[RMDB]
RNA sequence: GGGAACGACUCGAGUAGAGUCGAAAAGAUAUGGAUGCAGUAAGUGCCAGAGCCGAUCGGAAACGAUCGAGCUCGAUAAUUCUUACGCAUCCUAAGUCAAAAGAUUAGAGCGUUCGCGCUCUAAUCACAACCGUUCUGUGUUCGCACAGAACGGUUGAAAAGAAACAACAACAACAAC
Reactivity to 2A3 in 0.01 (KOAc 150mM, MgCl2 10mM, bicine 150mM(pH8.5), 24C), signal-to-noise 1, nucleotides 027 to 126: g000a010u000a000u040g000g000a020u000g000c150a070g190u010a010a000g030u070g300c300c300a050g000a000g080c000c000g000a000u010c010g000g050a050a000a010c010g010a000u000c030g020a100g000c020u000c020g010a010u030a020a070u150u010c000u020u010a000c000g020c000a000u000c000c000u010a000a000g000u010c040a080a030a000a180g010a020u010u010a010g020a010g010c010g030u150u070c280g020c010g060c160u000c000u030a000a000u030c000a000
Reactivity to DMS in 0.01 (KOAc 150mM, MgCl2 10mM, bicine 150mM(pH8.5), 24C), signal-to-noise 1, nucleotides 027 to 126: g000a020u000a020u020g000g010a000u010g010c020a210g030u000a000a020g040u000g060c300c140a250g010a030g020c030c000g000a010u000c000g020g010a000a020a050c010g030a010u000c000g000a110g020c030u000c010g020a090u010a100a220u000u020c000u000u000a000c000g000c000a010u000c020c000u000a000a070g000u020c000a100a110a120a050g000a010u000u000a000g010a020g000c010g040u000u030c280g050c000g010c000u000c000u000a000a000u010c000a230